Background
Structure probing data (2A3 and DMS) for a 177-nucleotide construct. For DMS the reverse transcriptase was MarathonRT.
RNA sequence: GGGAACGACUCGAGUAGAGUCGAAAAGAUAUGGAACGAUCACUUGUCAGAUAAUCGGAAACGAUUAGUCUUGGAUUUAGUGAGUCGUUCCUAAGUCAAAACCGUAAGGAGUUCGCUCCUUACGGAACGGUAUUACUAAGUUCGCUUAGUAAUACCGAAAAGAAACAACAACAACAAC
Reactivity to 2A3 in 0.01 (KOAc 150mM, MgCl2 10mM, bicine 150mM(pH8.5), 24C), signal-to-noise 9, nucleotides 027 to 126: g010a010u050a020u100g010g010a000a010c010g000a010u020c010a010c060u240u300g140u180c020a010g000a020u010a010a010u010c010g010g020a030a030a020c010g010a020u020u020a090g240u020c040u110u270g200g020a130u300u300u180a010g000u010g020a050g090u030c000g000u000u000c000c000u000a010a000g010u000c020a010a010a110a210c010c000g000u000a000a000g000g020a000g010u060u140c200g110c110u000c000c000u000u000a000c000g000g000a000a000
Reactivity to DMS in 0.01 (KOAc 150mM, MgCl2 10mM, bicine 150mM(pH8.5), 24C), signal-to-noise 9, nucleotides 027 to 126: g000a030u000a300u010g000g000a010a010c000g010a070u000c000a010c010u000u000g010u000c010a020g010a050u000a010a000u000c000g010g000a080a090a160c000g010a010u000u000a020g010u010c010u000u010g030g010a060u000u010u000a010g010u000g000a030g020u000c000g010u000u000c000c000u000a010a070g010u010c030a100a070a120a170c000c000g000u010a010a010g000g000a020g020u000u010c270g000c000u000c000c000u000u000a000c000g000g000a010a020